[RMDB]
RNA sequence: GGGAACGACUCGAGUAGAGUCGAAAAUCGGCCACUAUUGAGACACCAUGUGAGGAAAUGUAUUUAUCGACAUACAGCGUUCGUAGUUUCCAUUUGGCAACCUUUGUGGCGGCUAAUAGGCCCCUUGAAACGCCCGCAACGGUGUUUACAUCGCGCCGAUUGUGAACUUCUUCGGAAGUUCACAAUCAAAAGAAACAACAACAACAAC
Reactivity to 2A3 in 0.01 (KOAc 150mM, MgCl2 10mM, bicine 150mM(pH8.5), 24C), signal-to-noise 2, nucleotides 027 to 156: u080c030g050g000c010c030a040c050u100a080u090u130g010a070g020a000c010a000c000c020a050u000g000u020g060a170g050g090a040a050a050u100g040u030a100u070u250u140a220u210c060g000a020c020a050u240a020c070a070g030c020g140u090u050c020g000u040a060g000u010u010u000c000c010a040u060u000u150g010g000c020a050a080c000c010u050u120u190g070u080g030g010c070g010g000c030u090a150a030u070a260g100g000c010c000c010c010u010u000g030a060a000a040c100g000c000c030c020g040c050a080a130c100g000g000u000g000u010u020u050a060c010a010u050c000g020c030g030c060c020
Reactivity to DMS in 0.01 (KOAc 150mM, MgCl2 10mM, bicine 150mM(pH8.5), 24C), signal-to-noise 1, nucleotides 027 to 156: u000c020g020g010c000c010a060c100u020a170u010u000g010a200g030a100c020a100c010c010a140u000g010u000g020a170g030g000a110a080a070u010g010u000a140u010u010u010a120u010c060g030a090c020a120u000a140c060a130g020c100g000u010u000c040g000u010a140g010u000u000u010c040c010a300u000u000u000g030g020c020a030a030c040c010u000u000u010g040u010g020g010c060g020g040c010u000a000a100u000a080g010g000c090c050c010c060u000u000g010a080a050a080c020g090c060c030c060g020c250a120a060c060g020g060u000g000u010u010u000a090c040a070u010c030g020c040g000c050c050
Chemical mapping of a 207-nucleotide RNA with 2A3 and DMS.
High 2A3 reactivity points to a flexible backbone, as in loops and unpaired stretches.
The RNA was probed in 150 mM KOAc, 10 mM MgCl2 and 150 mM bicine (pH 8.5) at 24 C.
It was measured as part of the RMDB library OK3TST.